[RMDB]
RNA sequence: GGGAACGACUCGAGUAGAGUCGAAAAGGCAGAUAGCAAGGUAAGGAGGUGUGGGGGAAGACCAGCGGCUGUGCUCACCGUGGUUAGUGACACUGUCACCAUCCAGCCCCGGUCAGACAUGGUCCUAAGACAAGGCGGAGUUCGCUCCGCCUUGUCUAAAAGAAACAACAACAACAAC
Reactivity to DMS in 0.01 (KOAc 150mM, MgCl2 10mM, bicine 150mM(pH8.5), 24C), signal-to-noise 1, nucleotides 027 to 126: g020g000c100a060g060a080u000a130g010c060a090a050g010g000u010a080a100g020g010a140g000g010u000g030u000g000g000g010g000g010a160a090g000a050c100c070a050g030c260g020g010c000u000g050u010g000c110u000c230a020c030c020g000u010g010g000u000u000a050g000u000g000a010c020a190c250u000g000u000c020a010c030c130a090u000c140c110a090g070c070c000c040c000g000g000u000c080a030g020a070c070a030u000g000g010u000c000c040u000a120